Description
An RNA of 177 nucleotides, treated with 2A3 and DMS and read out base by base. Conditions: 150 mM KOAc, 10 mM MgCl2 and 150 mM bicine (pH 8.5), 24 C.
[RMDB]
RNA sequence: GGGAACGACUCGAGUAGAGUCGAAAAAUUUCUUACUUCGAAGUCAUACACAUAUCGAUGUUUCUCUUUCGACAGUGCAUUGUAUCUCUGUGAUGAAAGGUACAUUGAGCAGUAUUUUUUAUUAUCGGUAAAUACGUACCUUCGGGUACGUAUUUACAAAAGAAACAACAACAACAAC
Reactivity to 2A3 in 0.01 (KOAc 150mM, MgCl2 10mM, bicine 150mM(pH8.5), 24C), signal-to-noise 2, nucleotides 027 to 126: a000u060u080u000c020u010u070a080c040u050u120c060g050a070a030g040u090c020a010u030a090c050a000c000a120u170a060u130c020g010a000u000g000u010u300u040c140u000c000u000u030u000c010g060a040c010a020g000u010g010c060a110u170u300g060u210a260u030c010u040c000u000g050u040g070a270u070g020a050a010a000g000g030u000a020c000a000u000u020g040a020g000c070a000g000u010a050u060u040u030u030u050u080a140u140u090a150u100c040g040
Reactivity to DMS in 0.01 (KOAc 150mM, MgCl2 10mM, bicine 150mM(pH8.5), 24C), signal-to-noise 2, nucleotides 027 to 126: a090u010u000u000c000u010u010a090c080u000u020c070g000a120a090g000u020c090a050u000a080c060a090c130a150u030a130u000c070g010a010u000g000u000u010u000c030u010c010u000u000u000c010g000a050c010a030g030u000g000c140a080u000u010g020u030a220u020c000u000c010u010g020u000g010a120u000g030a020a010a010g000g010u020a010c000a030u000u000g000a040g020c220a140g000u010a000u000u000u000u000u000u000a070u030u010a090u020c110g010
Source: RMDB library OK2TST, as collected in RNAgym. The DMS profile rests on 1,772 reads.